This 207-nucleotide RNA was probed chemically with DMS and 2A3. DMS adducts were read by reverse transcription with MarathonRT. 2A3 adducts were read by reverse transcription with SuperScript II with manganese. It was measured as part of the RMDB library OK3TST.
RNA sequence: GGGAACGACUCGAGUAGAGUCGAAAAAACAGUAACCUCAUCGUGCUACGAAGCCAGAACGAAUCCCAGCUCAUGAAUCACCUCAAGCCCUACACCAAUGAGGAUACUUAUGAAGCAUUUGAAGUCAGAUUCAAUACUUUUGUCAUCAACUACUACGUCCGAUAUCGAAGUUCGCUUCGAUAUCGGAAAAAGAAACAACAACAACAAC
Reactivity to DMS in 0.01 (KOAc 150mM, MgCl2 10mM, bicine 150mM(pH8.5), 24C), signal-to-noise 1, nucleotides 027 to 156: a110a110c080a180g000u020a050a050c000c060u000c010a140u000c030g000u000g050c000u000a100c050g000a110a080g120c130c030a090g030a110a050c040g030a140a140u000c010c010c030a220g020c040u030c020a090u010g050a110a210u000c040a130c020c000u000c050a090a060g020c000c000c000u020a070c040a110c100c090a040a170u000g020a010g060g000a180u000a070c010u010u000a150u000g000a010a050g010c000a040u000u010u010g010a050a000g000u000c250a140g000a300u010u000c000a020a050u000a040c030u000u000u020u020g000u000c090a050u000c040a000a020c050u030a080c030u000a150c190g020
Reactivity to 2A3 in 0.01 (KOAc 150mM, MgCl2 10mM, bicine 150mM(pH8.5), 24C), signal-to-noise 2, nucleotides 027 to 156: a020a000c100a050g020u050a050a080c010c010u030c000a040u070c040g050u020g040c010u070a050c100g160a100a000g080c050c000a030g000a070a060c080g000a040a060u000c030c000c000a000g040c010u030c050a030u100g060a020a060u090c040a080c000c000u020c030a020a050g070c000c000c010u110a070c060a020c030c020a020a070u050g010a000g000g000a000u080a030c000u010u060a030u260g020a040a040g000c020a070u040u050u090g030a040a000g060u100c040a020g060a160u100u030c040a070a040u080a210c010u100u090u010u130g110u070c010a030u040c020a140a030c020u230a020c010u100a020c110g140